[RMDB]
RNA sequence: GGGAACGACUCGAGUAGAGUCGAAAAUCCUAAGUCUUCUUGGAUUUAGCCGUAGUUACUAGGGAGAGACUCGGAAACGAGUCUCGACGAUCUAGUAGGUUCGAAGGCUUGUCAGAAGAUAUGGAAAAACUCGACAACUCUUCGGAGUUGUCGAGAAUCUACGUACUUAGUUCGCUAAGUACGUAGAAAAAGAAACAACAACAACAAC
Reactivity to DMS in 0.01 (KOAc 150mM, MgCl2 10mM, bicine 150mM(pH8.5), 24C), signal-to-noise 2, nucleotides 027 to 156: u000c000c000u010a110a240g010u000c000u000u000c020u000u000g050g040a080u010u000u000a030g060c010c020g020u040a130g010u000u000a020c020u000a040g010g020g000a080g020a060g010a000c000u000c000g010g010a160a150a240c010g030a030g000u010c000u010c000g020a080c120g000a060u000c010u000a020g010u000a010g020g030u000u030c090g000a090a240g010g000c010u000u000g010u000c010a050g000a060a030g010a000u000a200u000g000g000a040a120a090a120a110c010u000c000g050a030c010a030a000c000u000c000u000u000c300g050g010a040g010u010u000g000u000c000g010a010g000a040a040
Reactivity to 2A3 in 0.01 (KOAc 150mM, MgCl2 10mM, bicine 150mM(pH8.5), 24C), signal-to-noise 4, nucleotides 027 to 156: u030c010c000u030a110a020g000u000c000u000u020c010u130u270g160g020a080u300u300u100a010g000c010c010g040u040a030g100u030u010a010c000u000a000g000g000g010a000g000a000g000a000c000u000c000g010g010a050a030a020c010g000a010g000u000c000u000c020g010a040c010g000a000u000c000u000a010g000u020a030g040g160u070u140c030g110a200a020g000g000c000u000u000g000u000c000a000g000a000a000g000a000u040a090u080g020g030a060a040a010a070a080c020u040c000g000a000c000a010a000c000u020c010u060u130c300g090g000a000g000u010u010g000u010c000g000a000g000a000a000